[RMDB]
RNA sequence: GGGAACGACUCGAGUAGAGUCGAAAAAGCCGUACUUUCCAUGAUAUCUGCCCAUGCCGCUCAUGCCGACGCCUCCGAAGGGCAGCACAUCAACUGCGAAACGGGGGAAUAAUAAGUGCGACUAGCCCAUGCGGGAGUAGUUCGCUACUCCCGCAUGAAAAGAAACAACAACAACAAC
Reactivity to 2A3 in 0.01 (KOAc 150mM, MgCl2 10mM, bicine 150mM(pH8.5), 24C), signal-to-noise 4, nucleotides 027 to 126: a000g040c000c010g020u020a030c020u040u030u030c030c030a090u080g080a060u110a040u080c050u060g060c000c010c000a040u090g030c020c020g010c000u010c030a040u080g020c010c000g030a020c050g040c000c000u010c000c000g080a120a070g040g100g000c000a000g000c040a020c000a110u190c030a050a090c010u020g000c000g110a130a080a070c050g020g000g000g000g050a000a020u130a090a020u080a070a000g080u030g030c030g040a040c020u030a030g030c010c010
Reactivity to DMS in 0.01 (KOAc 150mM, MgCl2 10mM, bicine 150mM(pH8.5), 24C), signal-to-noise 2, nucleotides 027 to 126: a060g000c000c000g000u010a020c020u000u030u010c060c020a070u000g000a120u070a010u010c090u010g000c000c050c010a040u010g000c030c030g030c080u010c090a030u000g000c110c080g010a140c260g020c000c010u000c030c000g010a030a020g000g030g030c000a000g010c090a060c190a190u000c260a030a070c000u010g020c020g020a030a090a100c060g000g010g000g000g010a050a050u040a100a000u010a090a040g000u030g020c040g000a120c020u030a090g020c000c020